[RMDB]
This 177-nucleotide RNA was probed chemically with DMS and 2A3. For DMS the reverse transcriptase was MarathonRT. Conditions: 150 mM KOAc, 10 mM MgCl2 and 150 mM bicine (pH 8.5), 24 C. Reactivities are given for positions 27 through 126. Source: RMDB libraries RFM100 and RFMREP, as collected in RNAgym.
RNA sequence: GGGAACGACUCGAGUAGAGUCGAAAAUGUGUUCUCACAAAGAAAGAUGGAAAAGUUUAACAAAAACUUGUGAAGGAAGAUGAAUGCUUUGAUUAUGCAUGAAUCCAUAAUGAUAAAGUGCUAUUGAGUAGUAUCACGCUUUCGAGCGUGAUACUACAAAAGAAACAACAACAACAAC
Reactivity to DMS in 0.01 (KOAc 150mM, MgCl2 10mM, bicine 150mM(pH8.5), 24C), signal-to-noise 3, nucleotides 027 to 126: u050g060u030g010u010u000c040u000c000a280c160a050a070a030g000a060a100a050g000a040u000g000g000a030a100a040a070g000u000u000u020a170a180c220a130a050a040a030a050c040u000u010g000u000g000a150a100g000g000a100a110g000a040u030g020a140a030u000g010c000u000u000u040g020a180u020u040a070u000g000c000a030u000g010a040a040u020c020c050a070u050a070a100u040g000a090u030a030a080a070g010u000g000c030u000a170u000u000g020a300
Reactivity to 2A3 in 0.01 (KOAc 150mM, MgCl2 10mM, bicine 150mM(pH8.5), 24C), signal-to-noise 1, nucleotides 027 to 126: u040g000u000g000u000u010c030u000c020a000c100a050a040a060g110a110a010a010g220a080u300g000g000a030a000a040a030g000u000u050u110a110a000c000a000a150a000a000a000c000u000u010g000u020g070a000a020g030g040a000a050g000a000u110g020a070a060u070g010c000u250u170u170g080a200u140u140a050u300g000c000a000u130g030a000a050u070c000c000a080u210a230a000u110g010a000u000a130a000a000g090u000g060c070u130a070u080u100g000a000